The record gives the reactivity of an RNA of 177 nucleotides to 2A3 and DMS. DMS adducts were read by reverse transcription with MarathonRT. Conditions: 150 mM KOAc, 10 mM MgCl2 and 150 mM bicine (pH 8.5), 24 C.

[RMDB]
RNA sequence: GGGAACGACUCGAGUAGAGUCGAAAAGAUAUGGACAGAGAACACGUAUAUCGUCUCUCGGAAACGAGUAGAUGAUGCGUGACUGUCCUAAGUCAAAGCGGAUGGACCGUUCGCGGUCCAUCCGCAAUCGACUUAGUAUGUUCGCAUACUAAGUCGAAAAAGAAACAACAACAACAAC
Reactivity to 2A3 in 0.01 (KOAc 150mM, MgCl2 10mM, bicine 150mM(pH8.5), 24C), signal-to-noise 2, nucleotides 027 to 126: g010a000u060a040u140g020g000a000c000a010g110a030g120a300a020c000a010c020g060u070a250u030a030u300c020g010u000c000u000c000u000c000g020g070a080a060a000c010g010a020g050u260a010g110a020u030g000a010u010g010c000g010u010g000a010c010u000g010u000c000c000u020a130a030g060u020c050a040a070a060g000c010g000g000a020u030g000g020a000c060c040g030u090u100c230g000c050g190g000u020c010c000a000u000c010c010g010c000a000a000
Reactivity to DMS in 0.01 (KOAc 150mM, MgCl2 10mM, bicine 150mM(pH8.5), 24C), signal-to-noise 2, nucleotides 027 to 126: g010a020u000a300u000g010g000a010c000a000g000a170g000a190a110c000a010c000g000u000a100u000a160u000c010g010u000c000u000c000u010c000g010g000a100a070a150c020g010a000g010u010a010g020a010u000g000a020u000g000c000g010u000g010a080c000u000g000u010c000c000u010a000a050g000u000c040a100a140a100g000c010g000g000a030u000g000g020a010c010c000g000u010u000c250g000c010g000g000u000c000c000a000u000c000c020g030c000a010a000
About this RNA
The data come from the RNA Mapping Database (RMDB), library TTRDEL.